RNA sequence: GGGAACGACUCGAGUAGAGUCGAAAAAAAAAAGAUAUGGAAAGAACUACAGCGGACCGGAGCGUUGAAACUAGCUCGGAAACGAGCUAGUGGAGCUCCUAGUACGCUGCUUUCCUAAGUCAAAAAAGUAAUGAACAUUGUUCGCAAUGUUCAUUACAAAAGAAACAACAACAACAAC
Reactivity to DMS in 0.01 (KOAc 150mM, MgCl2 10mM, bicine 150mM(pH8.5), 24C), signal-to-noise 2, nucleotides 027 to 126: a000a030a070a070a140a050g000a020u010a300u000g000g000a010a010a000g000a110a030c100u010a300c000a020g000c010g000g000a110c300c170g010g000a010g000c000g000u020u020g000a180a180a020c000u000a000g000c000u000c030g000g000a040a060a120c000g010a000g000c010u010a000g000u000g020g000a060g000c000u000c010c000u000a010g000u000a100c020g000c020u000g000c010u000u000u000c000c000u000a040a110g000u000c050a010a020a080a070a060a090
Reactivity to 2A3 in 0.01 (KOAc 150mM, MgCl2 10mM, bicine 150mM(pH8.5), 24C), signal-to-noise 1, nucleotides 027 to 126: a010a000a010a020a070a010g030a020u060a040u110g000g000a010a010a000g000a090a030c130u210a070c300a020g020c000g020g000a000c000c040g000g010a000g000c020g190u300u040g000a000a000a000c000u010a000g000c000u000c020g000g010a050a060a010c000g010a000g000c000u000a000g000u000g050g020a000g000c000u000c010c000u010a000g000u000a000c000g000c000u010g000c000u020u010u000c000c000u020a190a020g070u000c030a070a000a100a200a030a000

The record gives the reactivity of an RNA of 177 nucleotides to DMS and 2A3. DMS adducts were read by reverse transcription with MarathonRT. The RNA was probed in 150 mM KOAc, 10 mM MgCl2 and 150 mM bicine (pH 8.5) at 24 C.